[RMDB]
RNA sequence: GGGAACGACUCGAGUAGAGUCGAAAAGAAGACGUGACGAAAAGUCACGAAAAGAGCUGUCAGGUACCGACAGCAAAGAAAAGGUACCAAGACGGAAACGUCAGACAUCGGAGACGAUGUCAAAAGAAUGAUUUAUACGGUUCGCCGUAUAAAUCAUAAAAGAAACAACAACAACAAC
Reactivity to 2A3 in 0.01 (KOAc 150mM, MgCl2 10mM, bicine 150mM(pH8.5), 24C), signal-to-noise 6, nucleotides 027 to 126: g170a050a020g110a050c020g000u000g010a000c020g080a130a100a070a120g010u000c000a000c000g040a010a010a000a010g160a020g000c000u000g000u010c020a070g000g000u000a000c000c010g000a000c000a000g020c080a010a020a000g080a000a030a000a020g000g000u000a000c000c000a000a020g010a000c010g020g030a090a070a000c010g010u010c010a000g000a000c000a000u000c000g020g010a060g020a070c010g000a010u010g000u000c020a010a030a000a010g130a020
Reactivity to DMS in 0.01 (KOAc 150mM, MgCl2 10mM, bicine 150mM(pH8.5), 24C), signal-to-noise 4, nucleotides 027 to 126: g030a140a100g000a160c010g000u010g020a020c000g030a160a050a090a130g020u000c000a020c000g000a030a040a100a100g000a130g000c000u010g010u000c010a140g000g000u000a000c000c010g010a020c000a010g000c000a030a100a090g010a070a020a060a110g000g000u000a000c000c000a230a100g000a020c000g000g000a100a080a150c000g000u010c000a150g000a000c000a000u000c000g000g000a230g000a160c010g000a010u000g000u010c000a050a030a070a080g000a070